[RMDB]
RNA sequence: GGGAACGACUCGAGUAGAGUCGAAAAUGGCACAUGCCUGUAAUCCCAGCUAUUAGUGUGGCUGAGGUAUGAGAAUUGCUUGAAUCCAGGAGGCGGAGGCUGCAGUGAGCUGAGAUUGUACCACUGCGUACGCCCACGUAUUCGUACGUGGGCGUACAAAAGAAACAACAACAACAAC
Reactivity to DMS in 0.01 (KOAc 150mM, MgCl2 10mM, bicine 150mM(pH8.5), 24C), signal-to-noise 2, nucleotides 027 to 126: u000g010g000c020a130c260a070u000g000c040c000u000g020u000a110a090u000c010c000c000a140g040c070u000a090u010u000a140g020u010g000u000g000g020c030u000g000a070g010g030u000a040u000g010a080g020a180a090u010u000g030c030u020u000g000a070a090u000c030c020a120g010g030a110g020g020c050g000g020a140g000g020c100u000g010c060a010g020u010g000a100g010c030u010g010a160g000a120u020u010g010u000a090c090c040a040c040u010g020c140
Reactivity to 2A3 in 0.01 (KOAc 150mM, MgCl2 10mM, bicine 150mM(pH8.5), 24C), signal-to-noise 1, nucleotides 027 to 126: u060g050g000c030a100c050a120u120g000c000c000u000g040u080a000a060u040c000c000c000a000g000c000u050a080u230u120a190g140u070g000u050g230g000c050u080g020a090g060g010u100a030u080g100a100g000a230a100u160u090g010c010u040u050g040a030a020u050c040c010a000g030g040a010g060g040c150g000g010a030g130g000c030u030g000c040a010g060u030g000a040g030c050u010g010a030g050a160u100u000g040u040a050c050c030a020c010u000g000c000

Structure probing data (DMS and 2A3) for a 177-nucleotide construct. For DMS the reverse transcriptase was MarathonRT. The data come from the RNA Mapping Database (RMDB), library OK2TRN. 2A3 is a SHAPE reagent: it acylates the 2'-hydroxyl of flexible nucleotides of all four kinds.